[RMDB]
RNA sequence: GGGAACGACUCGAGUAGAGUCGAAAAUCACCAGCUUGCAGACCUACAUGGGCUUUAUCGCAUCUGGGCGCAUCCAAUCAUAGACAUAGACGGUGGAGUUAAGAAACUGCAGAAGGUUACACAGAGCUCCGCUCCAACAUUUCGAUGUUGGAGCGGAAAAAGAAACAACAACAACAAC
Reactivity to DMS in 0.01 (KOAc 150mM, MgCl2 10mM, bicine 150mM(pH8.5), 24C), signal-to-noise 1, nucleotides 027 to 126: u000c160a150c000c000a100g000c160u010u010g020c050a060g000a130c140c050u010a060c250a040u010g060g000g010c060u010u010u000a060u010c140g010c030a020u000c060u000g000g010g010c020g030c110a020u000c060c080a030a110u000c100a030u010a070g040a070c100a080u010a110g000a000c130g000g030u000g030g030a080g010u000u000a040a140g000a090a060a010c030u000g020c060a080g000a160a030g000g000u020u010a150c080a040c050a060g000a090g010c140